[RMDB]
RNA sequence: GGGAACGACUCGAGUAGAGUCGAAAAAACUCCAGCCUCCAAGCCUCAUGGGAGCAGUUAGAUCUGCAGGGUUAGUGCUCUGGCUACUGCACAGAAACGUAACCGGUAUAAUAGGAUAUGAAAAUGAGCGUACGUACAGGUUCGCCUGUACGUACGCAAAAGAAACAACAACAACAAC
Reactivity to 2A3 in 0.01 (KOAc 150mM, MgCl2 10mM, bicine 150mM(pH8.5), 24C), signal-to-noise 1, nucleotides 027 to 126: a000a000c000u000c010c030a000g040c000c000u020c070c000a000a000g000c000c000u090c000a000u000g080g000g020a060g000c000a000g040u060u060a100g000a130u040c000u080g000c000a020g060g000g010u000u090a010g000u020g140c000u000c000u000g020g020c000u100a230c080u130g000c120a120c000a090g090a060a060a000c000g000u000a020a020c000c000g090g030u120a060u000a030a080u040a000g070g120a040u100a120u050g170a040a000a000a040u090g110a000
This 177-nucleotide RNA was probed chemically with 2A3. The RNA was probed in 150 mM KOAc, 10 mM MgCl2 and 150 mM bicine (pH 8.5) at 24 C. The 2A3 profile rests on 453 reads. It was measured as part of the RMDB library RFM100. 2A3 adducts were read by reverse transcription with SuperScript II with manganese.